This 207-nucleotide RNA was probed chemically with 2A3 and DMS. For DMS, 4,334 sequencing reads were counted. Values cover nucleotides 27 to 156. The RNA was probed in 150 mM KOAc, 10 mM MgCl2 and 150 mM bicine (pH 8.5) at 24 C. It was measured as part of the RMDB library M2RFPK.
RNA sequence: GGGAACGACUCGAGUAGAGUCGAAAAACUGACGGUACGCCGUCAGAACGGUAGAAAAGAUGGUUUGAAAACCACGUCUUCUACCAAUAUAGUAAAUAAAUAGGCGGAGCGGUCAUACGUGACCGCAAAAACAUAUUCAGCUUCGGCUGAAUAUGAACUGUUAAUAAAGGUUCGCCUUUAUUAACAGAAAAGAAACAACAACAACAAC
Reactivity to 2A3 in 0.01 (KOAc 150mM, MgCl2 10mM, bicine 150mM(pH8.5), 24C), signal-to-noise 5, nucleotides 027 to 156: a000c000u000g000a000c000g020g020u050a030c150g020c040c000g010u000c000a000g000a050a010c050g000g000u000a010g020a020a040a030a030g080a260u030g010g070u040u130u260g180a200a170a010a000c000c000a010c010g010u000c030u030u000c000u000a000c010c000a010a000u110a020u030a010g060u040a000a050a190u090a050a090a050u140a060g060g070c070g040g030a010g020c000g020g000u010c010a020u040a130c180g040u030g010a030c000c000g000c000a000a000a000a000a000c000a000u000a000u000u000c000a000g000c010u040u100c170g100g000c000u000g000a000a000u000a000u000g000a010a030
Reactivity to DMS in 0.01 (KOAc 150mM, MgCl2 10mM, bicine 150mM(pH8.5), 24C), signal-to-noise 2, nucleotides 027 to 156: a080c010u000g010a000c000g010g010u000a050c210g070c010c020g000u000c010a000g000a040a040c130g010g030u010a000g000a000a010a040a030g000a030u000g010g000u010u000u000g030a250a160a130a080c010c000a010c010g000u000c010u000u000c000u010a020c000c000a090a050u000a110u000a130g000u000a080a040a140u010a070a050a200u010a140g020g010c040g000g000a300g030c000g060g030u000c000a070u000a030c160g030u000g000a240c020c000g010c020a000a020a050a110a050c010a010u000a000u000u000c000a010g020c030u000u000c300g080g050c000u010g000a000a000u000a000u000g000a030a180